[RMDB]
This 177-nucleotide RNA was probed chemically with DMS.

RNA sequence: GGGAACGACUCGAGUAGAGUCGAAAAAGCUGGGAGACUGUGAAGCCCGUACGCCAGUGUGGGUGGAGUCGUCGUUGAAAUACCAGUCUGGUCGUGCUGGAUGUCUAACCUGGGUCCGUGAUCCGGAAACUGAAUGGGUGUUCGCACCCAUUCAGUUAAAAGAAACAACAACAACAAC
Reactivity to DMS in 0.01 (KOAc 150mM, MgCl2 10mM, bicine 150mM(pH8.5), 24C), signal-to-noise 2, nucleotides 027 to 126: a110g020c030u020g010g000g000a100g000a010c000u010g000u000g000a290a270g000c010c010c020g040u000a050c030g020c090c120a130g000u010g010u000g010g010g020u010g000g000a030g000u010c070g020u030c160g020u010u000g010a080a080a140u000a100c040c000a040g010u000c090u010g020g010u010c080g010u010g000c020u000g020g000a050u010g000u000c060u010a090a100c080c020u000g030g010g000u000c010c070g000u020g010a130u010c020c010g010g000a130